[RMDB]
The record gives the reactivity of an RNA of 207 nucleotides to DMS and 2A3. For 2A3, 2,268 sequencing reads were counted. For 2A3 the reverse transcriptase was SuperScript II with manganese. For DMS the reverse transcriptase was MarathonRT.
RNA sequence: GGGAACGACUCGAGUAGAGUCGAAAACCUGGUUUAGGGUUCCAGGCUAGCCCUAUCUAUCGGUCGAGAUGCGAGCGCUUAAGCUCAAAUUGAGUGGCUGAGUUAGUGGUGAACGUAACCCUAUGUUAAAACGGUAGCUGCUUCGGCAGCUACCGAACACCUAUAAUAUGUUCGCAUAUUAUAGGUGAAAAGAAACAACAACAACAAC
Reactivity to DMS in 0.01 (KOAc 150mM, MgCl2 10mM, bicine 150mM(pH8.5), 24C), signal-to-noise 2, nucleotides 027 to 156: c000c010u010g050g010u000u000u000a000g000g030g030u000u010c030c030a090g060g040c030u010a200g010c000c000c000u010a030u010c040u000a120u000c030g050g030u000c000g000a300g010a100u000g020c300g010a050g000c010g000c300u000u000a120a190g020c000u000c000a010a260a040u000u000g010a260g040u000g000g000c010u000g000a080g000u000u000a020g020u000g010g020u000g010a090a050c060g020u000a020a060c020c000c000u000a080u000g020u010u000a030a070a080a200c030g000g000u000a010g020c000u010g000c030u000u020c300g030g000c050a000g000c000u000a000c000c030g010a010a100
Reactivity to 2A3 in 0.01 (KOAc 150mM, MgCl2 10mM, bicine 150mM(pH8.5), 24C), signal-to-noise 3, nucleotides 027 to 156: c000c000u010g000g010u020u030u060a000g040g000g000u080u210c030c010a010g000g040c030u040a030g030c010c000c000u010a030u010c040u020a160u050c010g010g010u010c020g020a020g000a130u030g020c030g010a000g000c050g060c180u240u290a120a080g000c000u020c000a020a020a010u020u020g010a020g040u230g060g000c020u010g020a010g010u000u010a040g010u140g240g000u050g020a110a040c040g020u050a000a010c010c000c000u010a060u100g050u050u130a050a060a020a010c000g010g010u000a000g000c000u010g030c030u090u100c180g060g000c000a000g000c010u010a000c000c010g000a000a000